Chemical mapping of a 177-nucleotide RNA with 2A3 and DMS. The 2A3 profile rests on 9,874 reads. The data come from the RNA Mapping Database (RMDB), library M2PK50. The RNA was probed in 150 mM KOAc, 10 mM MgCl2 and 150 mM bicine (pH 8.5) at 24 C.
RNA sequence: GGGAACGACUCGAGUAGAGUCGAAAAAGACUUGUAUUCGUACAAGUCUACAGAAAUUUCGCUACCACACGAUCACACCUAGCGUUCUCAAUAACGAUCGAACAACGUGUCAAUUCGUUGACACGAAAUAAUAGUCUUCGUUCGCGAAGACUAUUAUAAAAGAAACAACAACAACAAC
Reactivity to 2A3 in 0.01 (KOAc 150mM, MgCl2 10mM, bicine 150mM(pH8.5), 24C), signal-to-noise 5, nucleotides 027 to 126: a000g000a000c000u000u000g000u000a020u030u100c210g020u040a000c000a010a000g000u000c000u010a010c020a040g210a030a140a050u060u050u030c010g010c020u030a040c000c040a070c010a010c080g020a020u020c010a020c010a040c080c040u030a020g000c000g010u010u000c010u010c000a040a100u170a100a050c070g030a040u090c040g070a080a020c040a030a050c020g000u010g000u010c000a020a030u050u060c140g070u070u000g000a000c000a000c000g010a030a000
Reactivity to DMS in 0.01 (KOAc 150mM, MgCl2 10mM, bicine 150mM(pH8.5), 24C), signal-to-noise 5, nucleotides 027 to 126: a030g000a020c000u000u010g010u010a020u010u010c160g020u000a000c000a010a000g000u000c000u000a070c180a120g010a070a090a130u010u000u000c010g000c020u000a050c080c070a060c080a060c050g010a030u000c020a060c090a070c110c100u000a030g000c010g020u000u000c010u000c030a120a060u000a070a060c150g000a070u000c060g010a170a070c190a060a180c020g000u010g000u000c000a010a030u000u000c160g010u000u000g000a010c000a000c000g000a030a060